[RMDB]
RNA sequence: GGGAACGACUCGAGUAGAGUCGAAAAUGUCCAGUCCCUCCCCGUUCCUGGAGAAGGGAGACUCGGGAACGCCUAGCAUCUGAGGGACGAAGCCGCCCCCGGGCGCUCCCCUCGGAGGUCCACUGGGAAAGCUUAUACUUCGGUAUAAGCAAAAGAAACAACAACAACAAC
Reactivity to 2A3 in 0.01 (KOAc 150mM, MgCl2 10mM, bicine 150mM(pH8.5), 24C), signal-to-noise 9, nucleotides 027 to 129: u120g040u020c000c000a000g030u010c000c000c000u010c000c000c000c010g020u020u010c010c000u060g150g030a050g020a080a110g100g050g020a060g040a020c000u010c020g010g000g010a020a020c020g010c010c020u050a060g030c020a090u030c030u040g020a020g020g010g010a020c050g020a040a000g050c070c030g040c010c000c000c010c030g040g000g000c030g020c010u010c000c000c000c000u000c000g010g000a020g000g030u050c040c020a050c050u030g020g000g000a060a100a010
Reactivity to DMS in 0.01 (KOAc 150mM, MgCl2 10mM, bicine 150mM(pH8.5), 24C), signal-to-noise 9, nucleotides 027 to 129: u050g010u000c010c010a080g010u010c000c000c000u000c000c010c070c020g000u010u000c000c020u000g050g020a070g010a110a100g040g010g030a040g000a090c020u030c020g030g000g000a020a030c090g030c050c010u000a040g040c100a120u040c040u030g020a020g000g000g000a080c100g010a080a170g010c060c050g010c040c020c000c050c120g000g000g000c020g040c040u010c050c000c000c030u010c000g010g010a040g020g010u030c070c050a110c050u000g000g000g050a110a090a130